[RMDB]
Structure probing data (DMS and 2A3) for a 177-nucleotide construct. Values cover nucleotides 27 to 126. 2A3 is a SHAPE reagent: it acylates the 2'-hydroxyl of flexible nucleotides of all four kinds. It was measured as part of the RMDB library TTRDES. For DMS the reverse transcriptase was MarathonRT. 2A3 adducts were read by reverse transcription with SuperScript II with manganese. The 2A3 profile rests on 1,924 reads. The reactions ran in a buffer of 150 mM KOAc, 10 mM MgCl2 and 150 mM bicine (pH 8.5), at 24 C.

RNA sequence: GGGAACGACUCGAGUAGAGUCGAAAAGAUAUGGACGACGGUGGAGCAGCAACAGCUAAUUUCGGAAACGAAAUUAGACAUGCUGAACCAUUCGUCCUAAGUCAAAGAUCAAAGUUCGCUUUGAUCAUCUGCCUACUAGGUUCGCCUAGUAGGCAGAAAAAGAAACAACAACAACAAC
Reactivity to DMS in 0.01 (KOAc 150mM, MgCl2 10mM, bicine 150mM(pH8.5), 24C), signal-to-noise 3, nucleotides 027 to 126: g000a080u000a300u000g000g000a000c020g030a050c300g010g010u000g000g000a110g000c030a000g010c020a070a030c300a220g010c020u000a000a010u000u000u000c020g000g040a120a070a270c000g000a000a000a000u000u000a000g000a040c150a210u010g010c000u010g000a070a060c000c000a030u000u000c000g010u000c000c020u000a050a100g000u010c030a070a100a150g000a010u020c010a010a010a010g020u010u000c270g050c020u000u000u010g020a000u000c010a100
Reactivity to 2A3 in 0.01 (KOAc 150mM, MgCl2 10mM, bicine 150mM(pH8.5), 24C), signal-to-noise 1, nucleotides 027 to 126: g000a010u080a000u160g000g020a030c030g010a020c200g130g070u050g040g060a080g020c000a000g000c030a030a090c040a230g080c040u010a000a000u000u000u000c020g030g000a090a040a070c010g030a010a010a000u010u000a010g060a060c030a030u130g010c000u000g000a020a020c020c010a000u080u030c000g030u030c050c010u040a180a000g040u050c030a040a170a120g020a010u020c010a010a010a010g020u010u140c290g010c180u000u000u020g020a000u000c000a030